[RMDB]
RNA sequence: GGGAACGACUCGAGUAGAGUCGAAAAACUUUGGCCGACGCUGCUAGGCGGGUGCGCACUGCUGUCUGGCCCGGCGCCGCGCUAGGGCGCACGUUUCGCACUGCGGAGGGUAACCGGGCUGAAAUAACGUAUCACGGUUAUUCGUAACCGUGAUACGAAAAGAAACAACAACAACAAC
Reactivity to DMS in 0.01 (KOAc 150mM, MgCl2 10mM, bicine 150mM(pH8.5), 24C), signal-to-noise 2, nucleotides 027 to 126: a090c080u000u010u000g010g000c030c030g000a110c060g010c020u000g010c070u010a100g010g000c030g030g000g000u000g010c020g010c050a060c060u000g020c060u000g020u000c040u010g000g000c010c000c050g000g010c180g010c000c020g010c010g010c030u010a060g010g010g020c020g020c150a040c150g000u000u010u010c040g020c000a060c040u020g000c010g000g000a150g000g000g000u000a100a130c020c020g000g010g010c010u000g000a020a060a080u020a050a150
Reactivity to 2A3 in 0.01 (KOAc 150mM, MgCl2 10mM, bicine 150mM(pH8.5), 24C), signal-to-noise 1, nucleotides 027 to 126: a000c040u070u060u080g030g000c000c040g000a020c050g040c020u070g040c020u080a070g110g000c010g000g040g010u090g040c000g000c030a020c070u070g000c000u050g040u110c020u090g030g000c010c010c000g080g000c060g020c000c000g000c000g000c090u160a010g020g020g000c020g060c020a070c080g070u110u180u180c040g000c000a010c070u000g000c000g050g060a150g070g090g000u050a110a060c010c000g010g000g000c040u040g050a030a130a120u120a080a020